[RMDB]
RNA sequence: GGGAACGACUCGAGUAGAGUCGAAAAAGCGUCGAGGAACCUUCCAACCUUCCAAAGCAGCAAAAGCUGAACCUUCCAACCUUCCAAUCUACUCGAGAGGAGGAGGAGGAGGAGGAGGAGGAAUUAACCCUAGACAAAAUUUCGAUUUUGUCUAGGGAAAAGAAACAACAACAACAAC
Reactivity to 2A3 in 0.01 (KOAc 150mM, MgCl2 10mM, bicine 150mM(pH8.5), 24C), signal-to-noise 2, nucleotides 027 to 126: a010g110c070g020u020c040g010a060g020g050a120a080c010c000u000u000c010c020a110a100c020c000u040u060c040c000a040a110a050g000c010a010g000c030a100a300a120a050g000c000u010g030a070a080c010c010u060u000c000c050a100a090c020c030u050u040c010c020a020a030u030c020u090a080c030u030c070g020a030g000a010g030g050a040g000g020a040g000g020a050g020g070a050g030g050a020g040g050a040g000g020a020g000g010a010a010u060u030a040a050
Reactivity to DMS in 0.01 (KOAc 150mM, MgCl2 10mM, bicine 150mM(pH8.5), 24C), signal-to-noise 3, nucleotides 027 to 126: a050g010c050g010u010c040g010a090g010g000a080a130c070c030u020u000c030c000a050a060c020c040u000u000c040c060a050a120a110g000c020a030g000c050a080a050a070a060g020c010u010g000a050a080c050c000u000u000c050c040a110a120c080c010u010u010c010c010a120a200u000c000u010a080c080u000c050g010a020g000a250g000g010a110g000g000a100g000g000a120g000g000a190g020g000a180g000g000a150g000g000a150g000g010a300a060u010u000a030a100

Notes
Structure probing data (2A3 and DMS) for a 177-nucleotide construct. The 2A3 profile rests on 2,250 reads. DMS (dimethyl sulfate) methylates the pairing face of unpaired adenines and cytosines. Reactivities are given for positions 27 through 126. For DMS, 1,871 sequencing reads were counted. Conditions: 150 mM KOAc, 10 mM MgCl2 and 150 mM bicine (pH 8.5), 24 C.